An RNA of 177 nucleotides, treated with DMS and 2A3 and read out base by base. Reactivities are given for positions 27 through 126. The reactions ran in a buffer of 150 mM KOAc, 10 mM MgCl2 and 150 mM bicine (pH 8.5), at 24 C. The 2A3 profile rests on 515 reads. For DMS the reverse transcriptase was MarathonRT.
[RMDB]
RNA sequence: GGGAACGACUCGAGUAGAGUCGAAAAGGACGGGAAACCACAAGUUUCAGAUAGUUUCGUUGAUUCAAGCUCCUAGUUUUUUUGGCGCUUCCUUAAGAUCUUGAUUCUCUACUAAACAGUAUUGAGCGCUAAGAUGGCAGUUCGCUGCCAUCUUAGCAAAAGAAACAACAACAACAAC
Reactivity to DMS in 0.01 (KOAc 150mM, MgCl2 10mM, bicine 150mM(pH8.5), 24C), signal-to-noise 1, nucleotides 027 to 126: g000g000a120c130g000g040g000a080a060a040c030c040a230c250a060a260g000u000u020u000c080a050g000a140u000a180g000u000u010u000c140g020u010u000g010a080u000u010c000a030a130g000c050u000c000c030u050a010g040u000u000u000u000u000u000u000g000g000c000g000c020u000u000c080c030u020u040a020a030g050a000u000c000u080u030g000a080u000u050c000u000c030u000a030c090u000a070a080a240c170a020g000u010a120u000u050g000a030g000c130
Reactivity to 2A3 in 0.01 (KOAc 150mM, MgCl2 10mM, bicine 150mM(pH8.5), 24C), signal-to-noise 1, nucleotides 027 to 126: g000g000a000c130g050g000g000a000a000a060c060c050a060c060a220a100g040u020u020u040c000a000g010a110u090a070g070u000u040u100c040g000u100u180g000a100u010u040c050a070a020g030c010u030c000c060u070a080g060u000u050u000u000u140u000u000g050g010c110g000c060u010u020c030c030u010u040a020a000g030a030u060c030u130u110g020a050u240u020c000u000c000u040a060c000u030a000a130a000c040a000g000u030a120u000u300g050a110g010c020